[RMDB]
RNA sequence: GGGAACGACUCGAGUAGAGUCGAAAAUUUAGGUUUCAUGUGUACUUGCUAUUUUGGUGUCUUCUCUCUUUUGAACCUUAAGCUUAGAGCACCUAUGGGUGUCUAUGACUUUAAGGUCUCAACACAACUCGUUGUCAGUUCGCUGACAACAAAAGAAACAACAACAACAAC
Reactivity to DMS in 0.01 (KOAc 150mM, MgCl2 10mM, bicine 150mM(pH8.5), 24C), signal-to-noise 8, nucleotides 027 to 129: u000u060u030a080g020g020u000u000u010c100a000u020g020u000g000u040a090c120u010u040g040c070u050a050u010u000u000u000g030g040u050g050u000c070u030u010c000u020c000u050c050u070u040u030u020g000a030a020c010c010u010u070a000a080g020c000u000u000a000g010a130g030c040a000c000c000u000a090u100g060g030g030u020g020u030c020u030a000u020g030a130c040u030u040u010a030a030g000g000u000c110u040c070a040a060c300a060c140a130a060c100u030c160
Reactivity to 2A3 in 0.01 (KOAc 150mM, MgCl2 10mM, bicine 150mM(pH8.5), 24C), signal-to-noise 9, nucleotides 027 to 129: u120u100u080a080g040g020u020u030u070c050a050u110g050u000g020u090a080c020u080u070g050c020u060a110u080u110u070u110g080g010u070g010u020c010u050u000c010u000c000u010c000u020u120u060u100g020a030a020c000c000u000u000a000a000g000c000u000u000a010g000a050g070c000a000c000c010u060a180u290g230g000g000u000g010u000c000u000a010u010g150a280c020u070u080u050a000a000g000g000u000c020u020c010a010a000c030a000c010a100a160c040u050c160
Annotation:
Source: RMDB library 15KLIB, as collected in RNAgym. Chemical mapping of a 170-nucleotide RNA with DMS and 2A3. The 2A3 profile rests on 40,069 reads. For 2A3 the reverse transcriptase was SuperScript II with manganese. The RNA was probed in 150 mM KOAc, 10 mM MgCl2 and 150 mM bicine (pH 8.5) at 24 C. The DMS profile rests on 31,085 reads.